[RMDB]
RNA sequence: GGGAACGACUCGAGUAGAGUCGAAAAGCUCUGCGAGACAUAUCGAACAACAAAGAGAGAUCGAAAAUCUUAGAGGAGAGAACGAAUCUGUCGACUUCACUAGGACAUUGUCGAUCAGAGGUCCAAAGACCUUGCAUGGGUUCGCCUAUGUAAGGUCAAAAGAAACAACAACAACAAC
Reactivity to 2A3 in 0.01 (KOAc 150mM, MgCl2 10mM, bicine 150mM(pH8.5), 24C), signal-to-noise 9, nucleotides 027 to 126: g020c000u000c000u010g020c020g010a030g000a010c010a010u050a020u030c020g030a050a060c020a060a030c030a030a300a020g160a030g010a010g010a060u020c010g030a030a050a010a060u010c010u010u010a010g000a030g030g010a010g000a010g030a060a030c020g020a060a130u160c120u180g100u040c020g020a050c000u010u000c010a010c030u010a010g010g010a010c020a110u060u100g030u010c000g000a000u010c000a000g010a000g010g040u010c010c000a020a030a030
Reactivity to DMS in 0.01 (KOAc 150mM, MgCl2 10mM, bicine 150mM(pH8.5), 24C), signal-to-noise 9, nucleotides 027 to 126: g010c020u000c010u020g010c030g000a240g020a030c050a050u000a080u010c010g010a050a090c100a080a130c170a080a120a130g010a110g000a180g000a060u000c030g000a030a080a110a150u010c010u000u000a010g010a050g010g000a000g000a110g000a120a030c030g010a110a110u040c120u040g010u000c000g000a170c010u000u000c010a100c010u000a020g000g000a030c170a100u010u000g010u000c000g000a170u010c000a030g000a030g000g000u010c020c020a070a100a100
This 177-nucleotide RNA was probed chemically with 2A3 and DMS.
For DMS the reverse transcriptase was MarathonRT.
The 2A3 profile rests on 67,725 reads.
It was measured as part of the RMDB library OK1LIB.